The record gives the reactivity of an RNA of 177 nucleotides to 2A3 and DMS. For DMS, 1,112 sequencing reads were counted. DMS adducts were read by reverse transcription with MarathonRT. The reactions ran in a buffer of 150 mM KOAc, 10 mM MgCl2 and 150 mM bicine (pH 8.5), at 24 C. For 2A3 the reverse transcriptase was SuperScript II with manganese.

RNA sequence: GGGAACGACUCGAGUAGAGUCGAAAAGCCGUGCUCGAGAGGGACCAGAAAAUGCAGAGCUAUCCCGUCGUUUCGCUAAACAAAUGCGAAACGACAAAUUGCGUUACAUACGCAAUCCUCUAAUGAAACAACAUUCCGGAUUCGUCCGGAAUGUUGUAAAAGAAACAACAACAACAAC
Reactivity to 2A3 in 0.01 (KOAc 150mM, MgCl2 10mM, bicine 150mM(pH8.5), 24C), signal-to-noise 2, nucleotides 027 to 126: g010c000c040g080u050g010c010u000c040g080a050g010a050g080g020g040a030c000c050a020g080a000a100a040a020u150g050c060a010g020a010g020c020u010a130u040c010c020c060g010u000c010g000u010u000u020c010g000c010u070a210a220a090c110a030a080a010u100g000c010g010a000a000a010c000g010a000c000a000a020a000u000u010g000c010g010u000u130a160c090a130u240a030c060g020c020a000a010u000c000c020u080c000u050a100a190u160g180a120a140
Reactivity to DMS in 0.01 (KOAc 150mM, MgCl2 10mM, bicine 150mM(pH8.5), 24C), signal-to-noise 2, nucleotides 027 to 126: g010c030c050g000u000g000c070u020c010g000a090g000a240g000g000g020a130c060c080a100g000a050a070a090a090u010g000c080a050g000a060g000c050u000a090u020c010c020c000g010u000c010g000u000u000u000c000g000c000u010a050a140a170c300a100a110a090u000g010c000g010a000a000a000c000g000a010c000a010a060a020u000u010g000c000g010u000u000a080c260a120u010a000c000g010c000a000a000u000c050c030u000c020u000a130a120u040g000a160a090